[RMDB]
RNA sequence: GGGAACGACUCGAGUAGAGUCGAAAAAGAGGCGAUACGUCGCCUCAAGCUUGGUGCUUAGCUUCUUUCACCAAGCGUAUUACACGCGGAUAACCGCCAAAGGAGAAACACUGACUACGGUCAGUGAGGAAGUUGGUUCGGUUCGCCGAACCAACAACAAUGAUAUAGGGUUCGCCCUAUAUCAUUGAAAAGAAACAACAACAACAAC
Reactivity to DMS in 0.01 (KOAc 150mM, MgCl2 10mM, bicine 150mM(pH8.5), 24C), signal-to-noise 5, nucleotides 027 to 156: a080g010a020g020g020c000g020a050u010a050c240g030u000c010g030c000c000u000c000a020a040g010c010u000u000g010g010u000g010c070u000u000a050g000c080u000u000c010u000u000u000c010a040c000c010a010a030g000c000g010u000a030u010u000a120c080a100c080g020c020g010g000a240u010a120a120c020c010g040c020c080a050a090a070g030g020a080g020a180a120a170c020a030c000u000g000a030c000u000a100c300g110g000u000c000a010g010u000g010a030g010g020a090a130g000u010u010g000g000u000u000c010g010g010u000u000c300g020c000c000g010a010a010c000c000a000a010c000a060a110
Reactivity to 2A3 in 0.01 (KOAc 150mM, MgCl2 10mM, bicine 150mM(pH8.5), 24C), signal-to-noise 8, nucleotides 027 to 156: a000g010a000g000g000c010g000a000u020a050c240g090u010c000g010c000c000u000c000a000a000g000c000u000u000g000g000u000g000c030u030u030a070g020c010u040u030c000u010u020u010c000a000c000c000a000a000g000c000g000u010a050u050u210a050c080a020c040g010c020g000g040a110u100a300a300c010c010g000c020c020a030a020a010g040g010a020g020a030a080a010c010a000c000u000g000a000c000u020a020c170g070g000u000c000a000g000u010g000a000g030g060a140a090g000u000u000g000g000u000u000c010g000g030u030u050c180g030c070c000g000a000a000c000c010a000a000c000a000a000